[RMDB]
RNA sequence: GGGAACGACUCGAGUAGAGUCGAAAAGAUAUGGAGCAGCUACCCACCCUGGGAGAACCGAAGAACAUAGGUUCGUCGGAAACGACGAACCUAUGGGAGGUUCUCUCAGGAGGCUGCUCCUAAGUCACCCUAGAGUAUACUUCGGUAUACUCUAGGGAAAAGAAACAACAACAACAAC
Reactivity to 2A3 in 0.01 (KOAc 150mM, MgCl2 10mM, bicine 150mM(pH8.5), 24C), signal-to-noise 2, nucleotides 027 to 126: g120a070u300a170u300g000g000a000g000c000a010g010c030u160a300c030c020c020a030c010c000c000u010g030g010g000a020g020a010a000c000c020g100a280a090g040a180a010c000a000u000a000g020g010u000u000c000g000u010c010g040g100a100a130a070c010g010a010c010g010a000a000c000c000u000a000u000g010g000g000a010g000g000u000u000c000u020c010u010c000a000g000g000a000g010g000c000u000g000c000u000c000c000u010a000a000g010u030c060a100
Reactivity to DMS in 0.01 (KOAc 150mM, MgCl2 10mM, bicine 150mM(pH8.5), 24C), signal-to-noise 3, nucleotides 027 to 126: g000a130u020a180u000g000g000a030g030c000a010g000c040u000a170c060c010c050a300c180c010c000u020g000g020g000a020g030a010a000c000c000g000a130a150g000a160a210c000a000u000a000g010g010u000u000c000g020u010c000g010g000a030a130a200c030g020a010c010g010a010a010c000c010u000a000u000g010g000g020a150g020g000u000u000c000u000c010u000c010a010g000g000a010g000g000c020u000g000c000u010c000c000u000a010a070g000u020c150a160